[RMDB]
RNA sequence: GGGAACGACUCGAGUAGAGUCGAAAAGCUGCCGGCAAAGGGAGGGGGGGUGCCGCAACAAGGAGAGGAGGACGGAGUGGGGCGAGUGGAGCGUCAAAGGGGAUGUCAUCGCCGCCGAAUCUGCUCGAGGUGUUCAAGUAUUCGUACUUGAACACCUAAAAGAAACAACAACAACAAC
Reactivity to 2A3 in 0.01 (KOAc 150mM, MgCl2 10mM, bicine 150mM(pH8.5), 24C), signal-to-noise 2, nucleotides 027 to 126: g080c070u100g070c050c000g020g060c090a040a080a090g070g030g080a160g070g020g040g010g020g000g010u050g000c010c000g050c000a010a060c050a110a110g150g020a090g010a040g020g020a030g030g000a000c020g060g020a050g020u220g010g000g020g000c050g000a010g010u110g000g040a050g030c030g020u030c000a060a090a040g050g000g000g010a010u050g040u030c050a020u030c010g000c010c000g020c010c000g010a010a070u010c020u010g000c010u000c000g030